Notes: Structure probing data (DMS and 2A3) for a 177-nucleotide construct. High 2A3 reactivity points to a flexible backbone, as in loops and unpaired stretches.
RNA sequence: GGGAACGACUCGAGUAGAGUCGAAAAGAUAUGGACCGAGCUUUGAUCGUCGUAUCGGAAACGAUACUGACGGGAGCUCGUCCUAAGUCAAAAGCCGAUUUAUGUAGUUCGCUACAUAAAUCGGCAAGUGAUGAAUGUUCUUCGGAACAUUCAUCACAAAAGAAACAACAACAACAAC
Reactivity to DMS in 0.01 (KOAc 150mM, MgCl2 10mM, bicine 150mM(pH8.5), 24C), signal-to-noise 2, nucleotides 027 to 126: g000a050u010a300u020g000g010a000c120c080g030a000g030c000u000u020u030g010a130u010c010g000u000c010g000u000a000u000c000g010g000a120a110a170c010g010a000u000a000c000u020g040a010c000g000g000g020a010g000c010u000c010g000u010c000c000u000a020a120g010u010c020a090a090a150a160g000c010c000g010a020u000u000u010a000u010g010u000a020g010u010u010c300g000c010u010a000c000a010u010a000a000a000u000c000g000g030c020a010a000
Reactivity to 2A3 in 0.01 (KOAc 150mM, MgCl2 10mM, bicine 150mM(pH8.5), 24C), signal-to-noise 2, nucleotides 027 to 126: g020a000u070a050u100g000g020a010c140c190g000a050g030c040u190u250u150g120a130u300c010g020u000c000g010u010a000u000c000g000g010a070a080a010c020g000a010u020a020c100u300g000a000c000g000g000g000a000g010c000u000c020g000u000c000c010u010a080a030g060u030c050a040a060a100a110g000c000c010g000a000u010u010u000a010u020g010u010a010g000u010u060c300g010c210u000a000c000a010u010a000a020a010u010c010g000g000c000a000a000
The reactions ran in a buffer of 150 mM KOAc, 10 mM MgCl2 and 150 mM bicine (pH 8.5), at 24 C.